Structure probing data (2A3 and DMS) for a 177-nucleotide construct.
RNA sequence: GGGAACGACUCGAGUAGAGUCGAAAAGAUAUGGAUCCUUUCACAAGGGAGGAAUACAUGUCGGAAACGACAUGUUCCGAGGAUCUUGUGAGAAGGAUCCUAAGUCAAACUCCCCUUCGGGGGAGAACAUAGUUAAAGGCUUCGGCCUUUAACUAUGAAAAGAAACAACAACAACAAC
Reactivity to 2A3 in 0.01 (KOAc 150mM, MgCl2 10mM, bicine 150mM(pH8.5), 24C), signal-to-noise 3, nucleotides 027 to 126: g050a020u090a080u200g010g020a010u010c000c000u030u030u030c000a000c000a010a000g020g010g000a020g020g000a030a050u160a240c010a010u010g000u010c010g020g040a050a090a020c010g010a000c000a000u010g020u000u000c040c000g070a300g010g000a000u000c000u020u010g020u030g030a190g250a070a030g010g010a000u000c000c000u010a000a010g000u020c000a020a010a220c010u020c020c000c020c060u040u210c300g170g000g000g010g000a000g010a020a020
Reactivity to DMS in 0.01 (KOAc 150mM, MgCl2 10mM, bicine 150mM(pH8.5), 24C), signal-to-noise 2, nucleotides 027 to 126: g010a050u020a300u010g010g000a010u000c000c000u000u000u000c020a020c030a030a000g030g000g000a030g020g010a060a070u010a090c020a010u000g010u000c020g000g000a130a130a240c000g020a010c000a020u000g010u000u000c000c000g000a070g020g000a010u020c010u000u000g000u000g000a050g000a020a020g020g010a000u000c000c000u000a010a070g010u000c030a100a180a260c010u000c000c010c000c010u000u010c220g060g000g010g000g000a000g010a050a170